[RMDB]
RNA sequence: GGGAACGACUCGAGUAGAGUCGAAAAACAAUUCGAUGAGUUGGUGGCAUGUGCAACUGCCCGCAACCCUGCCGACCGAUACGCCGAUGCGAUCGCGAUGGGCGCCGAUCUGGAGGCGAUCGCCGAGAUAAUGCACAACGUUCGCGUUGUGCAUUAUAAAAGAAACAACAACAACAAC
Reactivity to DMS in 0.01 (KOAc 150mM, MgCl2 10mM, bicine 150mM(pH8.5), 24C), signal-to-noise 3, nucleotides 027 to 126: a130c140a090a140u000u000c080g000a140u000g000a120g010u010u000g000g020u010g000g020c040a040u000g000u000g000c140a040a070c090u000g010c020c000c060g020c100a050a090c040c030c040u010g010c030c020g010a060c100c050g010a050u000a110c060g040c030c050g010a180u010g000c080g010a000u000c020g030c060g010a190u010g010g000g000c040g030c050c030g010a050u000c090u010g020g000a170g010g000c010g000a010u000c020g020c030c140g000a080g000
Reactivity to 2A3 in 0.01 (KOAc 150mM, MgCl2 10mM, bicine 150mM(pH8.5), 24C), signal-to-noise 2, nucleotides 027 to 126: a000c090a030a110u150u040c040g160a120u090g060a030g060u030u000g030g070u030g030g000c030a070u110g070u090g100c050a090a040c040u160g040c040c000c000g050c000a050a030c030c000c010u020g000c010c000g090a040c000c010g020a030u120a150c040g000c000c040g040a070u160g060c040g000a010u030c030g010c010g040a060u110g060g000g020c030g010c010c060g000a100u030c040u100g060g040a010g130g010c000g010a020u010c020g060c010c000g100a120g020